Conditions: 150 mM KOAc, 10 mM MgCl2 and 150 mM bicine (pH 8.5), 24 C. Structure probing data (DMS and 2A3) for a 177-nucleotide construct. 2A3 adducts were read by reverse transcription with SuperScript II with manganese. For DMS, 4,770 sequencing reads were counted.
RNA sequence: GGGAACGACUCGAGUAGAGUCGAAAAGAAGAGACCGCCACUAGGAGUCAGGGUUCAGACACGAUCCAAGAGAACACGGUUACACUGACUGUGUAGCGGAAGAGGCAAAGAGAGUGGCGGAAGAGAAAGGAGUAUUUUACUUCGGUAAAAUACUCCUAAAAGAAACAACAACAACAAC
Reactivity to DMS in 0.01 (KOAc 150mM, MgCl2 10mM, bicine 150mM(pH8.5), 24C), signal-to-noise 4, nucleotides 027 to 126: g000a070a110g000a190g000a120c000c000g040c000c000a030c000u000a080g040g000a190g040u000c030a040g020g030g020u020u010c120a080g020a090c180a080c170g000a080u000c020c030a120a110g010a230g000a080a060c070a050c060g000g010u000u000a040c070a070c080u030g040a030c090u030g000u000g010u020a040g010c010g000g010a080a110g000a130g000g000c080a080a150a180g010a150g000a030g020u010g000g020c030g000g010a020a050g000a160g010a060a110
Reactivity to 2A3 in 0.01 (KOAc 150mM, MgCl2 10mM, bicine 150mM(pH8.5), 24C), signal-to-noise 5, nucleotides 027 to 126: g150a020a030g090a000g030a030c000c000g000c010c000a010c010u020a030g130g040a060g040u050c030a030g060g010g010u080u140c050a030g040a090c050a020c130g020a020u030c050c010a160a050g100a030g010a090a000c030a000c040g020g000u030u040a020c100a020c050u080g110a030c030u060g020u030g030u150a030g000c020g050g020a050a020g100a020g040g000c020a010a130a010g170a040g000a000g000u000g000g000c010g000g010a040a000g050a010g010a010a190